[RMDB]
RNA sequence: GGGAACGACUCGAGUAGAGUCGAAAAGGGCAUCUCCCGAGAUUUACUAGGCUGGUCAAACUCCGCGCCGACCUUCUUGGGCGUGGAUAAGACGAGAUCUUAAAUACGAAGGGAACACUUGUAGGAACGUACAUGGACGUGAUUUUGGACAGGGGUUGACUUAACAAGAGUUCGCUCUUGUUAAGUCAAAAGAAACAACAACAACAAC
Reactivity to DMS in 0.01 (KOAc 150mM, MgCl2 10mM, bicine 150mM(pH8.5), 24C), signal-to-noise 1, nucleotides 027 to 156: g030g030g030c050a140u010c040u010c000c010c010g010a300g020a040u000u000u000a050c020u000a000g020g060c040u010g020g010u020c040a060a160a140c300u000c000c010g010c010g020c000c020g020a100c090c190u020u000c040u000u010g040g050g000c090g000u000g000g000a060u000a010a180g010a090c020g020a060g000a200u010c050u010u010a000a100a060u000a060c040g030a090a120g030g000g000a090a070c050a010c100u000u000g020u000a070g030g010a050a020c090g050u000a070c050a110u000g030g000a090c080g000u010g000a120u000u010u020u000g000g000a020c100a000g000g000g000g000u000u000
Reactivity to 2A3 in 0.01 (KOAc 150mM, MgCl2 10mM, bicine 150mM(pH8.5), 24C), signal-to-noise 4, nucleotides 027 to 156: g010g010g010c040a050u040c050u040c070c000c010g020a060g010a040u100u120u080a060c130u090a030g110g040c040u080g040g000u030c020a050a100a000c020u000c010c000g000c000g020c000c010g110a170c030c000u250u200c100u290u300g110g000g000c010g010u000g000g000a010u000a020a020g020a000c020g060a000g010a040u020c020u060u090a020a040a020u120a110c050g050a070a020g000g020g000a060a020c020a020c050u040u050g030u050a020g040g070a080a030c030g010u090a040c020a110u120g020g030a010c010g020u020g040a090u050u020u060u110g020g000a000c000a010g000g000g000g000u010u020